[RMDB]
RNA sequence: GGGAACGACUCGAGUAGAGUCGAAAAUGACAUUUUCGGUAGUGACCUGCGCGUGAAGCACCUGUUGGGAAGACCGUGGAGCUGUCGCAGAAUCCACAUGUGAGGCCUUCUGCAACGAUUGGAGUGACCCUCAUGCACUGUUCGCAGUGCAUGAGGGAAAAGAAACAACAACAACAAC
Reactivity to 2A3 in 0.01 (KOAc 150mM, MgCl2 10mM, bicine 150mM(pH8.5), 24C), signal-to-noise 1, nucleotides 027 to 126: u080g010a010c040a070u030u000u130u150c020g040g090u090a070g030u040g190a200c040c000u010g000c030g040c020g070u070g080a050a000g040c030a050c040c060u150g020u110u060g090g000g000a010a030g040a030c040c100g010u000g000g000a010g000c100u080g070u130c070g030c140a030g040a100a050u020c030c000a030c020a060u200g080u020g200a080g000g020c000c030u010u000c020u050g120c020a000a020c000g150a090u030u150g030g040a040g060u070g090a100
Reactivity to DMS in 0.01 (KOAc 150mM, MgCl2 10mM, bicine 150mM(pH8.5), 24C), signal-to-noise 2, nucleotides 027 to 126: u020g000a080c110a280u000u000u000u010c020g020g040u000a060g030u000g000a060c030c020u000g000c100g010c210g030u000g000a060a170g010c060a090c060c020u010g050u010u010g000g000g010a050a050g000a030c000c060g010u000g000g030a030g010c050u000g000u010c090g010c060a050g010a100a100u000c010c010a040c050a160u010g020u040g000a130g010g000c010c010u000u010c000u000g000c050a040a010c000g000a160u000u020g010g020a100g030u010g010a150